[RMDB]
This 207-nucleotide RNA was probed chemically with 2A3 and DMS. The 2A3 profile rests on 1,867 reads. Values cover nucleotides 27 to 156. For DMS, 3,239 sequencing reads were counted. 2A3 adducts were read by reverse transcription with SuperScript II with manganese.

RNA sequence: GGGAACGACUCGAGUAGAGUCGAAAAUCAAGCAUUAUAUUGUCAUGUAAGAAACUGGAGCUUCUCAUGUUUGUAUUGCUGUAGAAGUAAACAUGUAUUUGCCAUGCGUCAUCAGGGAAGUUGCACUCACCGUCCAAGAACUUUUGUUAAAGUAAAACAUUAGGAUUACCUUCGGGUAAUCCUAAUGAAAAGAAACAACAACAACAAC
Reactivity to 2A3 in 0.01 (KOAc 150mM, MgCl2 10mM, bicine 150mM(pH8.5), 24C), signal-to-noise 4, nucleotides 027 to 156: u090c030a060a000g000c010a030u070u100a060u130a060u150u180g080u090c040a020u010g030u110a090a100g050a180a100a030c060u090g030g010a020g050c020u050u000c020u000c030a050u080g030u000u050u090g130u080a110u060u080g010c000u040g030u110a020g030a130a010g030u080a010a110a050c060a050u070g070u110a130u080u120u030g020c030c020a030u050g010c030g040u040c010a090u030c030a040g000g000g010a040a030g030u020u050g040c020a040c070u050c010a030c010c020g040u020c020c010a040a060g060a140a160c030u030u100u090u050g030u090u090a100a020a020g070u080a040a100a010a040
Reactivity to DMS in 0.01 (KOAc 150mM, MgCl2 10mM, bicine 150mM(pH8.5), 24C), signal-to-noise 2, nucleotides 027 to 156: u010c030a080a110g000c000a090u000u000a090u000a100u010u000g020u020c030a110u000g010u000a090a090g000a070a040a120c040u030g000g010a140g010c030u000u010c030u000c030a060u000g010u000u000u000g010u000a060u000u010g000c020u010g000u000a080g000a100a130g020u010a040a090a040c070a000u000g020u000a120u000u000u000g010c080c020a070u000g020c060g000u000c020a060u000c020a110g000g000g040a110a070g030u000u000g000c020a080c080u000c060a060c050c020g020u010c030c060a060a100g010a030a060c050u000u000u000u000g010u000u010a060a050a100g000u000a040a120a080a190